[RMDB]
RNA sequence: GGGAACGACUCGAGUAGAGUCGAAAAGGAUGUCACCAACACGUUAGCUACUGAAGCUGUCAAGGCAUUGACAUCUAUACCAAAGGCAAGUUCAAGGAGGCCGUAGCUAUGGGCGGGUUACGACGAAGGCACGGUAUGACUUCGGUCAUACCGUGCCAAAAGAAACAACAACAACAAC
Reactivity to 2A3 in 0.01 (KOAc 150mM, MgCl2 10mM, bicine 150mM(pH8.5), 24C), signal-to-noise 1, nucleotides 027 to 126: g060g000a040u040g010u040c020a000c000c000a030a020c050a000c060g040u140u150a010g020c020u060a070c080u210g110a130a050g010c010u000g000u070c040a070a060g030g000c090a130u000u070g000a000c000a000u030c010u020a050u020a030c010c000a010a090a040g070g000c000a040a040g070u170u150c060a050a040g080g000a050g020g070c030c030g020u030a020g000c000u030a080u130g020g010g070c030g040g040g000u050u020a020c060g000a000c020g050a050a120
Reactivity to DMS in 0.01 (KOAc 150mM, MgCl2 10mM, bicine 150mM(pH8.5), 24C), signal-to-noise 2, nucleotides 027 to 126: g000g000a020u000g010u000c000a110c060c030a090a060c200a200c170g030u030u020a080g010c000u010a140c200u060g020a160a060g030c050u000g000u040c060a200a150g000g000c300a090u000u000g000a050c030a030u020c000u000a110u000a090c050c020a040a110a130g040g000c050a030a030g010u000u000c130a120a070g000g000a130g000g010c030c040g040u000a010g010c050u000a040u010g020g010g010c070g000g030g000u000u010a020c070g000a080c040g020a110a020
Structure probing data (2A3 and DMS) for a 177-nucleotide construct. DMS adducts were read by reverse transcription with MarathonRT. It was measured as part of the RMDB library OK2TST. 2A3 adducts were read by reverse transcription with SuperScript II with manganese. The RNA was probed in 150 mM KOAc, 10 mM MgCl2 and 150 mM bicine (pH 8.5) at 24 C.